The record gives the reactivity of an RNA of 177 nucleotides to 2A3 and DMS.
[RMDB]
RNA sequence: GGGAACGACUCGAGUAGAGUCGAAAAUUUAUGAUAUGACGUUUGUCGCUGUAUAAGUGCUCCAAGAGAAUAAUUGAAACUAUCCGUUCAUUCAAGACUCGCGUCAAGACUCUGAGCUCAUAAUUGACCAUGAUUAGGGGUUCGCCCCUAAUCAUGGAAAAGAAACAACAACAACAAC
Reactivity to 2A3 in 0.01 (KOAc 150mM, MgCl2 10mM, bicine 150mM(pH8.5), 24C), signal-to-noise 2, nucleotides 027 to 126: u060u030u040a140u040g050a070u030a020u140g030a030c000g070u050u050u240g020u160c030g000c020u010g060u080a090u040a240a060g030u010g050c070u030c030c010a070a030g040a010g060a070a070u070a160a110u070u070g040a050a070a040c050u060a060u120c090c040g020u070u060c020a080u080u010c010a070a000g000a010c000u000c040g020c000g000u040c040a020a000g010a030c030u030c040u160g040a020g030c020u000c000a050u070a120a080u140u090g040a000
Reactivity to DMS in 0.01 (KOAc 150mM, MgCl2 10mM, bicine 150mM(pH8.5), 24C), signal-to-noise 2, nucleotides 027 to 126: u010u010u000a040u010g010a080u000a110u000g010a020c060g000u010u000u000g030u000c020g030c070u020g040u020a070u000a100a110g020u010g010c060u000c050c070a050a130g010a090g020a060a090u020a050a050u000u000g010a070a060a060c120u000a060u020c130c090g000u000u000c030a040u010u010c060a050a140g030a100c020u010c100g010c140g000u000c050a050a090g000a060c030u010c040u010g030a040g030c060u000c020a030u020a020a050u010u010g000a300
The reactions ran in a buffer of 150 mM KOAc, 10 mM MgCl2 and 150 mM bicine (pH 8.5), at 24 C. The data come from the RNA Mapping Database (RMDB), library OK2TST.